[RMDB]
RNA sequence: GGGAACGACUCGAGUAGAGUCGAAAAUGGACUUUAAAAAAAAUAUUCCUACUGUGGCGAAAGAAAUCUCUUCUCAGGCACUUUGGCACCGGUUGUCACCCACCAAAGAUCAAUGCAGGUGGAUGAACCAUACCAUCUAUUUCGAUAGAUGGUAUGGAAAAGAAACAACAACAACAAC
Reactivity to DMS in 0.01 (KOAc 150mM, MgCl2 10mM, bicine 150mM(pH8.5), 24C), signal-to-noise 4, nucleotides 027 to 126: u010g010g000a110c070u000u010u000a000a010a020a030a090a070a090a130u010a100u000u000c000c000u010a090c050u010g030u000g010g010c050g000a060a090a060g010a100a060a070u000c080u000c070u000u000c040u000c050a090g000g000c090a040c030u000u000u000g000g020c040a050c040c040g000g000u000u000g000u000c040a040c040c010c010a040c030c020a020a070a120g010a100u000c160a070a120u000g010c120a100g000g020u010g010g010a050u000g010a060a200
Reactivity to 2A3 in 0.01 (KOAc 150mM, MgCl2 10mM, bicine 150mM(pH8.5), 24C), signal-to-noise 2, nucleotides 027 to 126: u040g020g070a040c120u140u190u260a140a070a000a020a000a010a010a030u170a130u080u060c010c010u030a050c020u050g010u040g010g050c040g050a060a030a030g070a100a250a100u070c050u020c000u080u040c050u020c060a050g080g020c010a010c000u000u070u030g010g010c040a010c090c030g030g060u040u070g100u030c050a020c010c000c000a010c010c000a050a090a070g090a050u180c050a090a060u210g100c060a020g000g010u000g000g010a000u040g040a030a040